[RMDB]
RNA sequence: GGGAACGACUCGAGUAGAGUCGAAAAGAUAUGGACCCUUGACCACGCUAGAACUAUGAGUUGCGUAGGUCGGAAACGACCUACGCAACUCACGAAUUCUAGAACUACGUGGGAGGGUCCUAAGUCAUCUAAUCUAAAUCUUCGGAUUUAGAUUAGAAAAAGAAACAACAACAACAAC
Reactivity to DMS in 0.01 (KOAc 150mM, MgCl2 10mM, bicine 150mM(pH8.5), 24C), signal-to-noise 2, nucleotides 027 to 126: g000a090u000a300u010g000g010a030c000c000c000u000u000g010a300c000c000a000c000g000c010u000a000g000a000a010c100u000a170u000g010a040g010u000u000g020c000g100u000a000g020g000u010c010g000g010a110a090a240c020g060a060c020c000u010a030c000g010c000a000a000c000u000c000a010c070g010a070a130u000u000c000u000a000g000a130a110c180u000a260c020g010u000g010g000g010a010g010g000g010u010c000c010u000a000a070g000u010c040a140
Structure probing data (DMS) for a 177-nucleotide construct.
The RNA was probed in 150 mM KOAc, 10 mM MgCl2 and 150 mM bicine (pH 8.5) at 24 C.